This 177-nucleotide RNA was probed chemically with DMS and 2A3. The reactions ran in a buffer of 150 mM KOAc, 10 mM MgCl2 and 150 mM bicine (pH 8.5), at 24 C. 2A3 adducts were read by reverse transcription with SuperScript II with manganese.
[RMDB]
RNA sequence: GGGAACGACUCGAGUAGAGUCGAAAAGAUAUGGAGCGUCACGGGAGUAUUGUCGGAAACGACAACGUACGAAGAACGUGCGCUCCUAAGUCAAAGAUACUAACUCGGUUCGCCGAGUUAGUAUCAAGCAGAGAGACUAGUUCGCUAGUCUCUCUGCAAAAGAAACAACAACAACAAC
Reactivity to DMS in 0.01 (KOAc 150mM, MgCl2 10mM, bicine 150mM(pH8.5), 24C), signal-to-noise 2, nucleotides 027 to 126: g000a030u000a300u000g000g000a000g000c000g000u010c010a000c000g010g000g000a160g020u000a130u000u020g010u020c000g000g000a030a050a170c020g000a010c010a020a020c220g030u000a020c020g000a110a120g000a110a210c020g000u000g000c010g000c000u030c000c000u020a020a050g000u000c070a120a130a100g010a020u000a010c000u000a000a000c000u000c000g000g000u000u010c200g000c000c000g000a040g000u000u000a000g010u000a000u000c010a030a060
Reactivity to 2A3 in 0.01 (KOAc 150mM, MgCl2 10mM, bicine 150mM(pH8.5), 24C), signal-to-noise 2, nucleotides 027 to 126: g010a010u050a040u160g020g000a000g000c030g170u300c180a010c020g020g030g010a070g000u030a030u050u020g000u000c000g010g000a080a090a020c000g020a000c020a020a040c200g110u040a010c020g130a300a060g040a080a040c000g010u000g000c020g000c000u000c000c000u000a030a000g000u010c020a000a050a160g000a000u010a000c000u000a010a000c020u000c000g020g060u080u050c190g040c140c020g020a000g000u000u000a000g000u020a000u010c000a000a010